[RMDB]
RNA sequence: GGGAACGACUCGAGUAGAGUCGAAAACAUGCAAUGAGAUCAUGCGAUGAGAUCAUGCUAAACGAAACUGGAUUUACACUUUGAUCAAAAGGUAAAGCAAGGUUCGAUUGAUUUCAGACUUUUGUUAAAUAUUUCAUCAUCCAACUAUAGCAUGACAGCUCAACCGGUCAUUCGUGACCGGUUGAGCAAAAGAAACAACAACAACAAC
Reactivity to 2A3 in 0.01 (KOAc 150mM, MgCl2 10mM, bicine 150mM(pH8.5), 24C), signal-to-noise 1, nucleotides 027 to 156: c010a010u090g010c020a000a110u090g040a040g020a080u000c020a010u060g000c020g090a130u060g050a000g000a060u020c050a030u050g040c110u250a020a020a020c000g090a170a110a000c000u000g050g000a140u010u020u040a060c300a070c010u030u030u050g120a200u300c170a060a000a000a000g000g010u020a020a020a020g010c000a010a000g060g060u030u030c030g030a100u000u060g030a000u000u000u170c000a010g050a060c010u030u170u130u020g020u000u120a070a270a040u100a100u130u180u020c030a060u080c000a020u010c000c000a050a030c110u180a010u030a210g000c000a000u000g050a060c010a000